[RMDB]
RNA sequence: GGGAACGACUCGAGUAGAGUCGAAAAUGCAAAUGGCAGCCUGGUUGGCACAACUUUGCAGGGCAAGCCUAUUGGUAUGUUCUUCCCUUAUGACAUCGAACUUGUCACAGGAAAGCAAAAUAUUCUCCACCACUUGCCUUCGGGCAAGUGAAAAGAAACAACAACAACAAC
Reactivity to 2A3 in 0.01 (KOAc 150mM, MgCl2 10mM, bicine 150mM(pH8.5), 24C), signal-to-noise 6, nucleotides 027 to 129: u080g000c000a010a000a110u080g040g000c020a010g010c000c010u060g090g050u110u080g050g010c040a030c000a060a140c040u090u070u100g000c040a010g000g000g000c010a020a060g010c000c010u080a160u030u120g060g020u050a050u090g040u070u090c020u010u000c010c000c000u030u100a160u060g010a020c040a030u100c070g060a070a090c090u020u040g010u030c010a020c000a030g020g030a060a020a020g020c090a020a020a110a000u190a150u060u090c070u000c020c000a040c020
Reactivity to DMS in 0.01 (KOAc 150mM, MgCl2 10mM, bicine 150mM(pH8.5), 24C), signal-to-noise 5, nucleotides 027 to 129: u030g000c030a010a040a070u010g050g060c100a100g020c110c010u040g050g060u000u000g020g040c120a090c120a140a150c080u020u070u040g020c000a080g050g020g040c050a090a230g020c010c000u010a120u070u030g010g110u020a060u040g030u040u000c130u050u000c040c000c060u000u000a090u060g020a030c030a060u050c240g040a050a100c140u000u000g020u000c020a110c190a000g000g030a070a060a080g010c130a080a120a080a020u060a000u020u010c030u020c000c000a110c160
The data come from the RNA Mapping Database (RMDB), library 15KLIB. The record gives the reactivity of an RNA of 170 nucleotides to 2A3 and DMS. Conditions: 150 mM KOAc, 10 mM MgCl2 and 150 mM bicine (pH 8.5), 24 C. The DMS profile rests on 10,338 reads. 2A3 is a SHAPE reagent: it acylates the 2'-hydroxyl of flexible nucleotides of all four kinds.